[RMDB]
RNA sequence: GGGAACGACUCGAGUAGAGUCGAAAAUGAAGUGCAGGGCUCCUGGAGGAGCAAAGAAGCCUCUGCGCCCAAGGUGGUGUGAUGAAAGGGUGUCAUCUGACCAGAGUGCGCUGUCUGAAUUUAUUAAGCUGAUCAUGGAUUUCGAUCCAUGAUCAGCAAAAGAAACAACAACAACAAC
Reactivity to DMS in 0.01 (KOAc 150mM, MgCl2 10mM, bicine 150mM(pH8.5), 24C), signal-to-noise 2, nucleotides 027 to 126: u090g020a140a120g020u000g010c000a090g000g030g000c010u000c030c070u010g030g000a300g000g000a010g070c020a120a120a070g000a160a030g000c050c000u080c010u050g020c030g020c040c040c050a100a100g010g000u030g000g020u010g000u010g000a080u030g000a020a030a120g010g030g000u030g010u000c010a090u030c010u000g000a040c050c050a160g000a180g010u000g040c020g000c050u000g010u000c090u000g000a080a070u000u030u030a020u020u050a160a180
Reactivity to 2A3 in 0.01 (KOAc 150mM, MgCl2 10mM, bicine 150mM(pH8.5), 24C), signal-to-noise 3, nucleotides 027 to 126: u100g020a060a000g070u060g080c020a010g060g020g000c020u020c070c030u040g000g120a080g010g010a030g070c040a000a030a040g110a030a000g020c030c000u030c000u010g020c020g040c010c020c020a060a050g040g040u150g010g000u020g060u020g030a250u070g040a010a050a180g080g030g000u050g010u000c010a050u010c030u060g120a280c000c000a050g040a000g070u090g010c010g020c070u000g010u000c020u040g060a040a050u100u070u060a100u080u240a090a060